[RMDB]
RNA sequence: GGGAACGACUCGAGUAGAGUCGAAAAACAGGGUUUUACCAUGUUAGCCAGGUUGGUCUCGAACUCCCGACCUCAGAUGAUCCGCCCACCUCAGCCUCCCAAAGUGCUGAGAUUACAGGCACGAGCCACCACACCCUGCUUGACAAAAGAUUUUAGAACUACCGUAUCGUUUCGACGAUACGGUAGUAAAAGAAACAACAACAACAAC
Reactivity to 2A3 in 0.01 (KOAc 150mM, MgCl2 10mM, bicine 150mM(pH8.5), 24C), signal-to-noise 1, nucleotides 027 to 156: a070c060a070g000g020g030u020u080u050u270a020c030c010a000u050g030u170u090a060g060c100c000a000g020g010u030u020g030g000u150c000u020c100g070a080a070c030u000c050c000c010g060a120c020c000u060c000a100g010a220u110g010a010u000c090c000g000c040c030c000a050c030c020u000c000a010g000c000c000u100c020c040c050a150a160a050g230u250g090c030u000g000a000g000a070u080u170a050c100a080g000g000c030a010c040g000a000g080c030c000a000c000c000a020c010a000c000c010c060u070g090c050u110u120g040a100c080a030a070a000a010g070a050u040u110u100u230a130g130a020